[RMDB]
RNA sequence: GGGAACGACUCGAGUAGAGUCGAAAAGGGCGCGGUGAAUACGUCCCUGCUCCUUGCACACACCGCCCGUCAAAGCACCCGAGUGAGGUCCGGAUGAGGCCUGGUCACCAGGUCGAAUCUGGGCUUCACCUACAUCUCUCUUCGGAGAGAUGUAGGUAAAAGAAACAACAACAACAAC
Reactivity to DMS in 0.01 (KOAc 150mM, MgCl2 10mM, bicine 150mM(pH8.5), 24C), signal-to-noise 9, nucleotides 027 to 126: g020g010g010c130g010c140g010g020u000g010a140a100u020a130c090g000u010c010c010c010u010g010c060u000c070c080u000u010g010c070a100c100a110c040a070c040c030g010c010c020c020g000u020c100a060a100a130g010c140a130c010c010c020g000a120g010u010g000a010g010g010u000c000c000g000g000a010u000g000a300g000g000c000c000u000g000g010u050c090a180c030c000a000g000g010u000c000g000a150a010u000c000u000g000g010g000c000u000u000c010
Reactivity to 2A3 in 0.01 (KOAc 150mM, MgCl2 10mM, bicine 150mM(pH8.5), 24C), signal-to-noise 9, nucleotides 027 to 126: g050g000g000c070g010c080g040g030u070g060a110a060u200a140c050g040u040c010c000c000u010g010c000u060c030c060u050u160g020c040a030c000a000c000a010c030c010g010c010c010c000g040u070c060a100a060a040g040c030a080c010c010c000g020a030g070u080g000a000g000g010u000c000c000g010g000a000u000g010a010g000g000c000c010u010g000g010u300c140a150c190c000a010g000g000u010c000g000a000a010u000c000u000g000g000g000c000u000u000c000